[RMDB]
RNA sequence: GGGAACGACUCGAGUAGAGUCGAAAAGUGCGGACUGAAAUUCAUAGGAGCCUCGCCAUUAUGGGUGAACGCCGCGGUAAUCCGCGUAGUCGCGACGUAAACGUUCUGUGUUCGCGUUCAGGCCUCACACCGCCUAUGAUUUCGAUCAUAGGCGGUGAAAAGAAACAACAACAACAAC
Reactivity to 2A3 in 0.01 (KOAc 150mM, MgCl2 10mM, bicine 150mM(pH8.5), 24C), signal-to-noise 2, nucleotides 027 to 126: g010u040g030c000g010g030a050c030u040g040a080a120a130u220u150c110a090u140a180g120g030a040g000c040c000u010c030g020c020c040a100u240u150a080u250g140g010g000u030g000a020a000c000g080c090c000g000c000g000g000u110a080a020u080c040c010g040c030g000u070a050g060u030c010g000c000g020a010c040g000u050a100a160a000c060g040u090u000c030u110g030u030g010u090u080c060g020c000g020u050u030c020a010g070g000c000c020u020c010a050
Reactivity to DMS in 0.01 (KOAc 150mM, MgCl2 10mM, bicine 150mM(pH8.5), 24C), signal-to-noise 2, nucleotides 027 to 126: g020u010g040c070g020g010a010c050u000g000a050a050a090u000u000c060a070u010a090g000g010a080g010c080c050u000c020g030c010c060a090u010u000a050u010g010g020g000u010g000a060a060c060g000c030c010g010c020g010g000u000a110a100u000c070c020g000c030g000u000a150g020u010c010g010c020g030a020c040g020u000a060a080a120c090g030u000u010c030u020g020u010g000u000u010c060g000c090g000u000u000c030a060g010g000c010c020u000c100a130
Description: Chemical mapping of a 177-nucleotide RNA with 2A3 and DMS. Reactivities are given for positions 27 through 126. For DMS, 1,654 sequencing reads were counted. The RNA was probed in 150 mM KOAc, 10 mM MgCl2 and 150 mM bicine (pH 8.5) at 24 C.